About this RNA:
Conditions: 150 mM KOAc, 10 mM MgCl2 and 150 mM bicine (pH 8.5), 24 C. Structure probing data (DMS and 2A3) for a 177-nucleotide construct. Reactivities are rounded to 0.1 and cut off at 0 and 3.
[RMDB]
RNA sequence: GGGAACGACUCGAGUAGAGUCGAAAACAGUUACACUUCGGUGUAACUGACAGGCCAUCCCAGCAUCAACAACAACAACAGGGAGAUGCAUCCCUAACGCCAAAACCGCGCGCUUCGGCGCGCGGAAUGUAUACAUCACGUUCGCGUGAUGUAUACAAAAAGAAACAACAACAACAAC
Reactivity to DMS in 0.01 (KOAc 150mM, MgCl2 10mM, bicine 150mM(pH8.5), 24C), signal-to-noise 2, nucleotides 027 to 126: c030a000g000u000u000a000c000a000c000u000u000c200g030g020u010g020u000a000a000c000u000g020a020c220a050g000g000c000c030a160u010c000c000c010a300g010c020a110u010c130a010a080c060a020a070c040a020a100c000a090a070c200a040g000g000g000a140g000a080u000g000c030a120u000c000c000c000u000a120a140c060g000c050c110a020a030a110a110c000c000g060c110g160c030g210c030u000u010c220g010g080c090g080c050g080c040g040g010a000a010
Reactivity to 2A3 in 0.01 (KOAc 150mM, MgCl2 10mM, bicine 150mM(pH8.5), 24C), signal-to-noise 1, nucleotides 027 to 126: c010a010g000u010u000a000c010a010c000u050u090c250g110g000u020g020u010a000a000c000u000g010a020c020a010g130g070c020c010a050u000c000c000c020a000g060c000a020u140c020a000a100c000a020a020c010a030a000c000a010a040c070a040g000g070g000a060g000a080u270g080c040a140u010c000c000c010u050a070a030c070g070c070c040a000a080a030a070c020c000g000c000g000c000g030c000u070u070c260g060g000c000g150c000g040c020g010g020a010a000
Notes:
The data come from the RNA Mapping Database (RMDB), library M2PK50.